[RMDB]
RNA sequence: GGGAACGACUCGAGUAGAGUCGAAAACGGGUAUGCACCCAUCUCCCUUCGGGAACGGGUGGAGACGAUGCGCGAGCAUCUCGAGCGUGCCAUCGCAUACAAGGGAGAAGAGAUCGCCUGCAGGGAGCUCAACAAUGACGUUCGCGUCAUUGUUGAGAAAAGAAACAACAACAACAAC
Reactivity to DMS in 0.01 (KOAc 150mM, MgCl2 10mM, bicine 150mM(pH8.5), 24C), signal-to-noise 3, nucleotides 027 to 126: c130g000g020g030u000a050u030g010c100a090c020c010c020a150u000c040u010c000c000c020u000u000c210g020g000g030a100a070c140g030g000g040u010g000g010a100g010a070c140g010a030u000g000c010g000c220g010a130g000c020a050u010c020u000c070g020a130g000c080g020u010g030c040c030a080u010c050g020c080a080u000a070c100a050a070g000g000g010a070g000a070a080g020a080g000a070u010c080g000c020c010u000g020c050a050g010g010g000a110g010
Reactivity to 2A3 in 0.01 (KOAc 150mM, MgCl2 10mM, bicine 150mM(pH8.5), 24C), signal-to-noise 2, nucleotides 027 to 126: c030g020g000g030u100a090u290g070c080a030c020c010c010a040u000c010u010c000c000c000u020u070c150g000g030g040a100a050c050g050g000g020u040g020g010a050g020a020c060g000a020u010g020c020g020c040g010a040g010c030a060u000c030u040c050g070a040g030c080g020u090g020c010c010a040u020c040g030c060a040u060a170c020a050a020g020g000g010a020g020a040a030g030a020g010a030u090c070g000c010c000u000g000c020a020g060g010g040a040g030
Source: RMDB library OK2TST, as collected in RNAgym. Structure probing data (DMS and 2A3) for a 177-nucleotide construct. For 2A3, 2,774 sequencing reads were counted. Values are in units of 0.01, from 0 to 300, in steps of 10. Values cover nucleotides 27 to 126. DMS adducts were read by reverse transcription with MarathonRT. For 2A3 the reverse transcriptase was SuperScript II with manganese. Conditions: 150 mM KOAc, 10 mM MgCl2 and 150 mM bicine (pH 8.5), 24 C.